Background: The record gives the reactivity of an RNA of 177 nucleotides to DMS. The DMS profile rests on 2,056 reads.

RNA sequence: GGGAACGACUCGAGUAGAGUCGAAAAAUAUGUCUGCCUUCGAUCAGUAAUCCCUGGUCUCAAUGACCAGGCCACACCCCCCGAUGUACUCCGUGCUUACGGGUUUUACGUUUGCCCAGGGCCCCCACUCAAAGCUAGUUUUCGAACUAGCUUUGAGAAAAGAAACAACAACAACAAC
Reactivity to DMS in 0.01 (KOAc 150mM, MgCl2 10mM, bicine 150mM(pH8.5), 24C), signal-to-noise 2, nucleotides 027 to 126: a150u010a060u000g010u010c030u000g020c060c000u000u000c080g000a080u000c040a050g020u010a100a090u020c150c040c000u000g000g010u000c000u010c240a100a100u010g000a010c000c010a010g000g000c070c040a070c100a270c040c010c010c000c000c010g000a020u010g010u010a040c110u000c040c030g030u000g010c110u000u000a060c010g000g000g000u000u010u000u010a060c050g000u000u000u010g010c010c010c000a080g000g000g000c020c000c000c010c030a260